Chemical mapping of a 207-nucleotide RNA with 2A3 and DMS. Source: RMDB library OK3TST, as collected in RNAgym. The RNA was probed in 150 mM KOAc, 10 mM MgCl2 and 150 mM bicine (pH 8.5) at 24 C.
[RMDB]
RNA sequence: GGGAACGACUCGAGUAGAGUCGAAAAUGCGAAGCCCUUCCGGAGGCGAGGCCCGGAGAGAGGAGGGAGUGAUUCAUAAACUCAGAGCCGGCGUGCCAGGGUCUGUGAGCAGCGUGGAAGAGGCUGGCAGGCCGUUGCUGCGCUAGACAGAAGGGUAUACGUAUUUAAUGUUCGCAUUAAAUACGUAAAAAGAAACAACAACAACAAC
Reactivity to 2A3 in 0.01 (KOAc 150mM, MgCl2 10mM, bicine 150mM(pH8.5), 24C), signal-to-noise 8, nucleotides 027 to 156: u170g010c050g080a080a030g030c010c000c000u010u010c040c020g070g020a050g030g000c040g020a050g020g030c040c020c010g010g010a060g010a000g010a020g050g030a030g030g080g000a020g020u080g050a080u120u100c060a020u160a140a120a040c020u020c040a030g020a030g130c010c030g020g000c040g040u070g010c010c010a030g040g000g010u000c000u010g020u020g020a030g020c020a010g010c030g070u110g050g040a090a040g050a020g100g020c000u000g030g000c010a010g000g020c000c020g120u050u100g000c010u030g000c010g010c010u010a030g030a090c020a020g020a010a010g010g010g000u050a040
Reactivity to DMS in 0.01 (KOAc 150mM, MgCl2 10mM, bicine 150mM(pH8.5), 24C), signal-to-noise 2, nucleotides 027 to 156: u020g030c030g020a140a150g030c010c020c020u010u010c010c040g010g010a140g020g060c050g000a060g020g000c020c010c010g000g010a090g020a130g000a100g010g040a110g010g010g010a080g010u010g010a210u010u000c060a170u000a070a110a110c030u000c000a120g000a140g030c000c000g020g000c060g020u000g020c030c040a090g020g030g020u000c020u020g020u010g010a100g030c040a060g020c060g060u000g030g000a140a130g000a090g040g030c030u000g000g000c080a060g020g010c000c000g000u010u000g010c010u000g030c000g030c050u000a110g000a080c030a060g000a040a050g010g030g000u000a260